The record gives the reactivity of an RNA of 177 nucleotides to DMS and 2A3. For DMS, 8,128 sequencing reads were counted. In probing experiments dimethyl sulfate is read out at A N1 and C N3, which are open when not base-paired. Source: RMDB library OK2TRN, as collected in RNAgym. Reactivities are given for positions 27 through 126. The RNA was probed in 150 mM KOAc, 10 mM MgCl2 and 150 mM bicine (pH 8.5) at 24 C.

RNA sequence: GGGAACGACUCGAGUAGAGUCGAAAAGGUCGGCGAUGGCGGCGGCCAUGAUCGCGUCGGUCUGCGGGGUCUUGAACACCCAGUUGCGCUUGCCGUCCACCGGCUUGAUGAUUGCUUCGGACGCGGCGAAUCCCCUCUAUUUCGAUAGAGGGGAUUCAAAAGAAACAACAACAACAAC
Reactivity to DMS in 0.01 (KOAc 150mM, MgCl2 10mM, bicine 150mM(pH8.5), 24C), signal-to-noise 5, nucleotides 027 to 126: g000g020u000c010g010g000c080g000a120u010g000g010c020g000g020c020g000g000c020c040a060u010g010a060u000c030g030c120g020u010c050g010g010u010c030u000g000c060g010g000g010g010u000c050u000u010g010a130a110c300a080c000c000c000a110g010u000u000g020c120g020c020u010u000g050c010c010g010u000c020c040a070c080c040g010g010c000u000u000g000a100u010g000a140u000u010g000c030u000u010c090g010g000a080c060g020c040g000g010c130
Reactivity to 2A3 in 0.01 (KOAc 150mM, MgCl2 10mM, bicine 150mM(pH8.5), 24C), signal-to-noise 3, nucleotides 027 to 126: g000g000u040c030g010g040c060g200a190u200g040g000c020g000g010c020g000g000c000c020a070u090g040a050u050c060g010c070g170u100c070g040g100u030c020u050g010c030g000g030g020g000u000c010u080u260g080a110a010c020a050c040c000c000a020g020u090u230g020c060g010c050u110u300g000c000c020g030u040c000c050a030c030c010g020g000c000u030u040g010a040u100g000a010u050u300g030c030u090u100c030g020g000a010c020g030c040g030g060c060